[RMDB]
RNA sequence: GGGAACGACUCGAGUAGAGUCGAAAAAGAUGAGCGGAAAACCGGCGGCGCGUCAGGGCGACAUGACGCAGUAUGGCGGUAGCAUUGUCCAGGGUUCAGCCGGGGUACGCAUCGGUGCCCCCACCGGGGUUAAGAUGAUCUUCGGAUCAUCUUAACCAAAAGAAACAACAACAACAAC
Reactivity to DMS in 0.01 (KOAc 150mM, MgCl2 10mM, bicine 150mM(pH8.5), 24C), signal-to-noise 4, nucleotides 027 to 126: a110g000a080u000g010a100g050c030g020g000a070a050a120a110c040c010g000g000c020g020g010c100g010c050g000u020c030a080g030g020g020c070g010a080c070a090u000g020a060c020g000c020a100g020u000a090u010g020g010c030g010g010u000a080g010c070a100u010u000g000u010c020c020a110g000g010g010u020u010c060a120g020c030c030g000g010g000g000u000a070c040g020c090a060u000c050g020g000u000g000c040c010c000c050c060a050c060c050g010g010
Reactivity to 2A3 in 0.01 (KOAc 150mM, MgCl2 10mM, bicine 150mM(pH8.5), 24C), signal-to-noise 2, nucleotides 027 to 126: a000g120a100u190g000a030g030c040g040g010a040a080a010a070c010c020g050g000c000g050g000c020g000c010g080u040c030a040g040g030g020c030g020a020c030a080u090g010a000c010g000c020a020g050u150a150u160g090g010c010g010g030u030a040g010c040a050u050u130g000u080c030c010a000g000g000g060u080u100c040a030g010c030c000g010g000g000g000u020a010c030g000c010a070u080c030g020g020u050g040c000c020c030c010c020a050c040c050g110g010

Chemical mapping of a 177-nucleotide RNA with DMS and 2A3. For DMS, 4,785 sequencing reads were counted. The RNA was probed in 150 mM KOAc, 10 mM MgCl2 and 150 mM bicine (pH 8.5) at 24 C. For DMS the reverse transcriptase was MarathonRT.